[RMDB]
RNA sequence: GGGAACGACUCGAGUAGAGUCGAAAAAUCAUGAACAUGUCGUCGGUGGUGGGUCGCAAGGCCUUUGCGCGAUUCGCCGGCUACUCCUCCGCCAUGCACGCGAUCGCCGGUUUCUCCGAUGCGUUGCCGGCAAGUAUAUGUUCGCAUAUACUUGCCGAAAAGAAACAACAACAACAAC
Reactivity to 2A3 in 0.01 (KOAc 150mM, MgCl2 10mM, bicine 150mM(pH8.5), 24C), signal-to-noise 2, nucleotides 027 to 126: a000u130c070a080u180g080a060a050c060a060u100g020u120c050g030u020c050g020g030u050g000g030u040g020g030g050u070c000g000c040a050a050g090g090c050c000u080u060u100g100c090g000c040g020a050u120u120c020g040c010c000g000g040c010u040a020c000u040c000c000u020c020c010g030c020c000a050u150g040c060a000c070g040c020g030a030u050c020g000c040c010g000g020u030u120u000c040u000c010c010g020a040u030g020c040g010u010u050g060c010
Reactivity to DMS in 0.01 (KOAc 150mM, MgCl2 10mM, bicine 150mM(pH8.5), 24C), signal-to-noise 3, nucleotides 027 to 126: a090u010c080a090u000g010a110a070c110a070u010g010u010c040g010u000c030g010g010u000g000g030u010g010g020g010u000c020g000c180a100a160g010g010c070c050u000u000u010g000c110g010c030g020a080u000u010c040g000c020c070g000g000c030u000a030c050u000c020c040u000c080c080g010c040c040a070u010g020c100a080c070g000c040g010a030u000c050g000c050c020g020g020u000u000u000c030u000c050c030g000a050u000g000c040g010u000u010g010c080